Structure probing data (DMS and 2A3) for a 177-nucleotide construct. It was measured as part of the RMDB library OK2TRN. The reactions ran in a buffer of 150 mM KOAc, 10 mM MgCl2 and 150 mM bicine (pH 8.5), at 24 C. DMS adducts were read by reverse transcription with MarathonRT. The DMS profile rests on 1,306 reads.

RNA sequence: GGGAACGACUCGAGUAGAGUCGAAAACACAGAUUUUUUUCAGUUUUAGCACCUAAGGCGCAGCUAGGCGGCAGCAGAGACUUGUUAGUACAAGAAACAGGAACUAAAAUAAUUCAUGCAGCAACUGAGUCGUUAUACAUUUCGAUGUAUAACGACUAAAAGAAACAACAACAACAAC
Reactivity to DMS in 0.01 (KOAc 150mM, MgCl2 10mM, bicine 150mM(pH8.5), 24C), signal-to-noise 2, nucleotides 027 to 126: c040a120c120a090g010a020u000u000u000u000u000u000u000c070a060g010u000u000u000u010a130g020c080a040c050c030u010a060a050g010g040c030g050c040a050g020c060u000a050g020g010c050g000g020c020a020g000c050a070g020a120g000a120c050u000u000g010u000u010a120g000u000a100c060a030a080g000a100a080a100c070a080g020g020a120a050c040u000a030a030a060a030u000a030a060u020u000c110a080u000g000c080a050g010c110a040a080c130u000g000
Reactivity to 2A3 in 0.01 (KOAc 150mM, MgCl2 10mM, bicine 150mM(pH8.5), 24C), signal-to-noise 2, nucleotides 027 to 126: c030a000c020a030g060a120u060u070u030u030u050u120u120c050a040g060u100u010u000u180a020g020c040a050c050c000u060a080a040g050g010c050g000c040a000g030c030u080a040g060g000c050g010g000c000a000g000c000a000g060a000g000a100c010u010u030g000u030u040a040g060u060a110c040a130a000g100a130a110a010c030a020g000g080a020a030c030u140a070a090a000a200u150a050a100u090u060c020a020u070g020c010a020g010c000a030a040c030u080g070